Chemical mapping of a 177-nucleotide RNA with DMS.
The reactions ran in a buffer of 150 mM KOAc, 10 mM MgCl2 and 150 mM bicine (pH 8.5), at 24 C.

[RMDB]
RNA sequence: GGGAACGACUCGAGUAGAGUCGAAAAAGCCGCAUCGGAAGAAUUGAUGGAGAUGUUAAAAUAUACAUAGAAGGGGAAUUUAGCGAAAGCAGACAUCUCGCCCCAAAAUGUAAGAAAGGAUGCGGGGAACCCACCGCAAAUUCGUUUGCGGUGGGUUAAAAGAAACAACAACAACAAC
Reactivity to DMS in 0.01 (KOAc 150mM, MgCl2 10mM, bicine 150mM(pH8.5), 24C), signal-to-noise 1, nucleotides 027 to 126: a180g100c040c000g000c010a000u000c000g070g030a140a150g000a130a140u070u040g040a220u020g020g000a120g000a000u000g010u000u000a080a060a060a040u000a180u040a020c110a140u060a120g000a210a080g000g000g000g010a120a020u020u080u030a070g000c000g050a010a090a120g020c030a300g000a030c010a000u000c010u000c100g000c010c010c000c000a050a090a060a030u000g020u060a120a160g000a120a090a200g000g000a000u000g000c000g000g000g000g000